Conditions: 150 mM KOAc, 10 mM MgCl2 and 150 mM bicine (pH 8.5), 24 C. This 177-nucleotide RNA was probed chemically with DMS and 2A3. For DMS the reverse transcriptase was MarathonRT.
RNA sequence: GGGAACGACUCGAGUAGAGUCGAAAAUGAAGCCCUGGUGGGGAGGGGCACAGAGCGAGAUGGGGCGUAAUGGAAUGCUUGAAGGCUGCUCCGUGAUGUCGGUCGGAGCUUCCAGACUAGGCGAGGGCUCCUGUCUAAUGUUCGCAUUAGACAGGAGAAAAGAAACAACAACAACAAC
Reactivity to DMS in 0.01 (KOAc 150mM, MgCl2 10mM, bicine 150mM(pH8.5), 24C), signal-to-noise 3, nucleotides 027 to 126: u010g030a180a180g010c010c010c020u010g010g020u010g010g000g000g000a090g000g000g000g020c060a090c100a070g010a070g000c070g000a100g000a090u000g010g000g010g030c070g000u020a060a110u010g010g000a070a060u000g010c010u010u000g000a100a120g000g010c070u000g010c040u000c040c040g000u010g010a120u010g020u000c110g010g020u010c010g010g010a040g020c000u000u000c020c010a090g010a100c120u000a120g020g010c070g000a080g010g010g010
Reactivity to 2A3 in 0.01 (KOAc 150mM, MgCl2 10mM, bicine 150mM(pH8.5), 24C), signal-to-noise 2, nucleotides 027 to 126: u070g030a070a010g020c000c010c020u020g070g030u110g030g010g010g000a030g040g020g020g020c040a030c020a030g120a010g040c090g000a050g020a150u070g010g000g050g050c040g040u070a070a050u090g020g090a090a060u120g040c020u040u050g070a130a030g030g000c010u000g030c010u030c010c010g010u090g050a150u190g070u170c070g020g030u020c000g000g040a000g000c010u060u010c020c010a020g010a040c040u070a050g020g050c020g020a030g010g020g030